[RMDB]
RNA sequence: GGGAACGACUCGAGUAGAGUCGAAAAAGAUAUUACGAUAUCAACGGAUGAGGAUAGGGAGGAGGAGUAUGAUACGAGCAUGUAUCAUUUCAGUGAGCACGUACCUCCAGCGCGGGAGAGCAAGAGCUUGAGUGAAGCUCAUAGAAACAACAGUAAGUUGCAGAGGUGGUGCAAGAAACAAGAUAGGCUACUUAUCAAGUGCUUCAAAGCCAUCACGUUUCUGACGGACAAGAUAAGCUGCUUCUCUUCUACUACAGCUAUUCCGAACAUUAAAGUUCGCUUUAAUGAAAAGAAACAACAACAACAAC
Reactivity to 2A3 in 0.01 (KOAc 150mM, MgCl2 10mM, bicine 150mM(pH8.5), 24C), signal-to-noise 4, nucleotides 027 to 266: a040g040a000u060a010u100u130a030c090g040a020u030a010u060c030a110a050c010g030g000a020u060g070a090g100g020a040u050a030g010g010g000a010g000g010a000g000g010a000g030u110a040u110g030a020u030a040c060g050a080g210c140a140u290g030u000a000u020c010a010u050u100u060c030a020g020u010g050a010g000c020a000c020g080u100a010c000c000u010c000c030a060g030c010g000c040g020g090g040a160g010a000g050c030a130a060g030a000g050c010u050u070g050a050g060u140g070a070a020g000c000u000c010a020u040a060g090a040a090a020c050a040a010c010a030g070u150a200a020g010u080u130g030c030a000g020a010g010g030u030g030g000u020g000c020a010a000g020a010a020a010c050a090a090g010a040u060a120g020g010c030u060a020c020u140u090a120u190c070a150a060g020u040g090c080u150u120c130a140a090a000g010c000c010a000u010c020a010c060g010u010u040u030c010u020g020a010c030g050g020a040c040a090a040g030a090u060a090a030g020c010u010g000c000u030u000c000u000c000u010u020c000u020a190c010u020a020c030a020g070c030u030a040u080u020c010c000g000a000a010
Reactivity to DMS in 0.01 (KOAc 150mM, MgCl2 10mM, bicine 150mM(pH8.5), 24C), signal-to-noise 6, nucleotides 027 to 266: a140g010a030u000a010u000u010a150c110g010a060u000a010u000c010a150a210c050g000g010a030u010g000a140g010g000a100u000a030g000g000g000a010g000g010a020g010g000a040g020u020a010u010g000a020u000a000c050g010a150g040c170a080u030g020u010a010u000c000a060u000u010u010c040a100g030u010g010a140g010c020a030c040g020u020a110c040c010u000c010c050a080g010c030g020c060g010g010g010a140g020a110g010c130a150a100g000a020g010c010u000u000g010a190g040u020g010a040a030g010c010u000c010a060u010a090g010a130a100a130c090a050a080c080a110g010u010a080a140g000u000u000g010c060a120g010a030g000g020u000g010g010u000g000c020a090a050g000a040a010a010c060a110a260g000a020u000a080g030g010c020u000a030c030u010u000a050u010c100a040a120g020u000g010c130u010u010c170a060a110a090g010c010c030a060u000c020a060c280g000u000u000u010c040u000g000a050c100g000g010a080c130a050a130g000a080u000a110a120g000c040u000g000c020u000u000c010u000c010u000u000c010u000a050c030u000a050c120a120g010c050u000a100u000u010c000c000g000a150a180